[RMDB]
RNA sequence: GGGAACGACUCGAGUAGAGUCGAAAACGUGGCCCCUUUUCUCGUGCGGCGGCCUGCAUCCGUUCAGUUGCUGAUGGAAUCGCUGCCGCACUGCUUGAAGCAAAUCCCCGCCGAGCCGGAGGCCGGAGUAGGGUGUAUCGUUCGCGAUACACCCUACAAAAGAAACAACAACAACAAC
Reactivity to 2A3 in 0.01 (KOAc 150mM, MgCl2 10mM, bicine 150mM(pH8.5), 24C), signal-to-noise 5, nucleotides 027 to 126: c070g050u100g050g020c010c000c010c000u030u030u070u050c060u010c010g010u010g000c000g010g000c010g010g000c020c030u030g030c020a010u010c010c020g050u060u100c090a170g040u190u130g150c050u020g010a010u020g000g100a050a030u140c040g010c030u010g000c000c000g000c000a000c000u000g010c000u030u090g060a060a030g020c050a080a030a090u060c000c000c000c000g000c010c030g030a030g030c010c000g070g030a070g000g030c010c010g020g020a040
Reactivity to DMS in 0.01 (KOAc 150mM, MgCl2 10mM, bicine 150mM(pH8.5), 24C), signal-to-noise 3, nucleotides 027 to 126: c100g040u030g000g000c020c010c000c000u020u020u000u000c010u010c070g010u000g010c000g040g000c010g020g000c020c120u020g010c130a100u000c010c020g020u010u010c070a070g010u040u020g040c050u010g020a060u000g010g000a040a170u010c300g000c000u000g000c010c000g000c010a000c010u010g020c080u000u000g000a110a050g010c070a060a120a070u000c040c020c000c070g000c040c020g000a090g000c080c100g000g010a120g030g000c020c060g000g000a140
Description: The record gives the reactivity of an RNA of 177 nucleotides to 2A3 and DMS. The reactions ran in a buffer of 150 mM KOAc, 10 mM MgCl2 and 150 mM bicine (pH 8.5), at 24 C. It was measured as part of the RMDB libraries RFM100 and RFMREP.